[RMDB]
Source: RMDB library OK1LIB, as collected in RNAgym.
Chemical mapping of a 177-nucleotide RNA with 2A3.
The RNA was probed in 150 mM KOAc, 10 mM MgCl2 and 150 mM bicine (pH 8.5) at 24 C.

RNA sequence: GGGAACGACUCGAGUAGAGUCGAAAAAGCGUGUGCUUACAAGUAGUCAGAGCCCGUUAAUGGGUGAUGGCGUGGACGCCGAGUCUUCCAGUCGUACAAUUCCACAUAGGCGAGGCAUAAGCGAAAGGGUCAUCCACCCGUUCGCGGGUGGAUGACCAAAAGAAACAACAACAACAAC
Reactivity to 2A3 in 0.01 (KOAc 150mM, MgCl2 10mM, bicine 150mM(pH8.5), 24C), signal-to-noise 1, nucleotides 027 to 126: a010g170c150g170u300g080u080g200c050u070u000a000c150a120a120g120u210a070g000u030c000a000g070a000g000c000c000c000g080u040u230a110a130u270g000g000g000u050g000a000u000g000g100c040g020u000g000g000a000c010g000c000c010g040a040g050u000c050u010u000c030c030a030g010u000c010g020u050a240c110a000a130u000u030c150c000a070c070a160u020a050g000g000c040g050a020g040g150c040a000u010a300a000g000c000g110a080a130a000g130